[RMDB]
Chemical mapping of a 177-nucleotide RNA with 2A3. The RNA was probed in 150 mM KOAc, 10 mM MgCl2 and 150 mM bicine (pH 8.5) at 24 C. 2A3 adducts were read by reverse transcription with SuperScript II with manganese. Source: RMDB library OK1LIB, as collected in RNAgym.
RNA sequence: GGGAACGACUCGAGUAGAGUCGAAAACGUAGCGCAGCCCGGCUUUCACGAUCAGCCCGCCGAGUUCGAUUUUUUCGCGGGUGUCCUUCUUGCGUGCGUCUGACGUCAUCGACUGUGCCAUCCGUUCGCCACCGUCCAUGUUCGCAUGGACGGUGGCAAAAGAAACAACAACAACAAC
Reactivity to 2A3 in 0.01 (KOAc 150mM, MgCl2 10mM, bicine 150mM(pH8.5), 24C), signal-to-noise 2, nucleotides 027 to 126: c000g050u030a010g070c000g030c020a040g020c000c000c050g000g000c000u070u140u080c150a160c070g030a120u030c080a000g010c000c020c040g030c070c000g030a070g050u100u150c120g000a100u050u100u070u040u050u040c040g000c000g060g020g000u040g000u090c020c000u060u120c040u110u090g000c030g000u070g020c000g100u180c030u040g070a010c010g030u020c000a030u050c000g050a040c000u050g010u020g140c030c000a010u110c090c000g040u020u090c080